Structure probing data (2A3 and DMS) for a 177-nucleotide construct.
2A3 adducts were read by reverse transcription with SuperScript II with manganese.
[RMDB]
RNA sequence: GGGAACGACUCGAGUAGAGUCGAAAAGCCAACAAGAAUAUCGUUUUUGGUAAAAUUAUGGCUGGCUAAAUCUUUUCCACCCAUAGCGCUAUCGUCUUCAGCACCCUCGAUGGCGUUGCGUAGCGCAACGCGGAACAAGCUUCGGCUUGUUCCGCGUAAAAGAAACAACAACAACAAC
Reactivity to 2A3 in 0.01 (KOAc 150mM, MgCl2 10mM, bicine 150mM(pH8.5), 24C), signal-to-noise 4, nucleotides 027 to 126: g010c000c000a010a020c040a030a050g150a110a080u060a060u110c040g070u040u060u050u170u300g010g010u040a050a100a130a140u160u070a080u110g000g050c060u010g020g000c030u090a130a130a190u160c060u060u120u020u010c020c010a040c000c010c030a070u100a030g000c000g000c020u030a040u190c050g150u040c080u070u030c010a060g040c000a140c000c020c010u170c080g210a250u190g040g000c030g000u000u010g000c020g030u020a010g010c000g000c040a020
Reactivity to DMS in 0.01 (KOAc 150mM, MgCl2 10mM, bicine 150mM(pH8.5), 24C), signal-to-noise 4, nucleotides 027 to 126: g010c010c000a030a080c060a060a080g000a110a160u000a030u020c070g020u000u000u000u000u020g010g020u020a040a090a110a110u000u010a080u010g000g020c050u000g000g010c050u010a050a070a080u000c090u000u000u000u010c010c030a160c130c030c040a070u010a070g010c020g020c010u000a010u010c040g000u010c090u000u020c040a110g000c050a060c030c060c080u010c160g010a080u000g010g010c020g040u000u000g010c030g030u000a020g010c020g000c050a120

Record summary: Reactivities are given for positions 27 through 126.